[RMDB]
RNA sequence: GGGAACGACUCGAGUAGAGUCGAAAAACGCCCACCCCUGACCGCAGCGGAGCCCUUGCGCAAAUGCAGGAAAAGCUGGCGGCGGCGGUCGCGCGCGCGGAGGAGCUGGAGCGGGAGCACGAGGGCGCUGGAUAGAUUAUUUCGAUAAUCUAUCCAGAAAAGAAACAACAACAACAAC
Reactivity to DMS in 0.01 (KOAc 150mM, MgCl2 10mM, bicine 150mM(pH8.5), 24C), signal-to-noise 6, nucleotides 027 to 126: a150c150g010c010c000c000a300c050c010c010c030u010g020a080c030c000g020c010a080g010c060g010g000a110g010c040c060c000u010u010g020c020g010c090a140a100a090u010g010c020a050g000g010a090a080a130a150g000c020u000g010g010c010g000g010c020g010g020c150g000g010u000c030g010c030g020c090g010c060g010c050g010g010a070g000g010a070g010c030u010g000g010a120g010c050g000g000g000a120g000c060a050c100g010a120g000g000g020c060g010
Reactivity to 2A3 in 0.01 (KOAc 150mM, MgCl2 10mM, bicine 150mM(pH8.5), 24C), signal-to-noise 4, nucleotides 027 to 126: a000c030g020c020c010c010a050c020c010c000c000u040g130a060c000c000g010c020a050g060c030g070g050a010g000c020c010c000u030u090g010c020g000c050a110a060a110u210g000c010a020g130g000a100a150a020a010g020c030u070g130g090c030g020g000c000g030g050c100g060g000u020c000g000c010g000c000g000c000g000c030g090g020a060g020g020a090g010c030u050g030g050a050g030c020g000g030g000a030g080c040a020c090g030a100g020g020g020c030g000
Structure probing data (DMS and 2A3) for a 177-nucleotide construct. The 2A3 profile rests on 9,343 reads. For 2A3 the reverse transcriptase was SuperScript II with manganese. For DMS, 7,899 sequencing reads were counted. The RNA was probed in 150 mM KOAc, 10 mM MgCl2 and 150 mM bicine (pH 8.5) at 24 C. Reactivities are given for positions 27 through 126. For DMS the reverse transcriptase was MarathonRT.